[RMDB]
RNA sequence: GGGAACGACUCGAGUAGAGUCGAAAAUGAGACAAACACGCUUCACAAUGUGCGGCGAAGAAACAUUGUUUAUGCAAAGGCACUUCGCAAUGUGUGCUCAAACAUUGCUUAUUCAAACACGCUUCACAAAAGAAUCAGUGGUUCGCCACUGAUUCAACUUAAUUAAACUCUUCGGAGUUUAAUUAAGAAAAGAAACAACAACAACAAC
Reactivity to 2A3 in 0.01 (KOAc 150mM, MgCl2 10mM, bicine 150mM(pH8.5), 24C), signal-to-noise 8, nucleotides 027 to 156: u170g020a030g030a050c050a030a160a010c060a010c040g010c010u030u020c020a010c000a040a070u030g000u000g000c020g030g030c070g060a110a030g060a030a070a010c020a020u010u010g080u050u110u100a120u140g060c050a060a070a090g170g000c000a000c010u040u040c050g000c010a020a020u020g010u000g020u020g020c090u120c210a040a050a000c010a020u000u000g000c000u070u120a170u120u130c090a040a110a040c050a030c080g090c040u120u120c070a070c040a130a090a040a060g000a000a000u000c000a010g000u000g010g050u030u050c200g030c040c000a000c000u000g000a000u000u000c000a000a000
Reactivity to DMS in 0.01 (KOAc 150mM, MgCl2 10mM, bicine 150mM(pH8.5), 24C), signal-to-noise 3, nucleotides 027 to 156: u010g030a140g020a200c050a100a090a150c090a100c000g030c040u010u000c050a060c030a080a070u010g030u010g020c030g030g020c040g030a100a030g040a090a030a040c010a040u000u000g020u010u000u000a080u010g010c040a040a140a170g010g010c010a040c020u010u000c100g030c080a170a090u000g010u000g020u000g000c020u010c040a070a100a050c020a040u000u000g020c010u000u010a100u010u000c090a090a100a150c060a080c100g010c030u000u010c030a110c070a080a050a140a220g010a020a000u000c000a010g020u010g010g020u000u010c300g010c000c000a010c000u000g000a010u000u000c000a020a090
Overview:
This 207-nucleotide RNA was probed chemically with 2A3 and DMS. The reactions ran in a buffer of 150 mM KOAc, 10 mM MgCl2 and 150 mM bicine (pH 8.5), at 24 C. DMS adducts were read by reverse transcription with MarathonRT.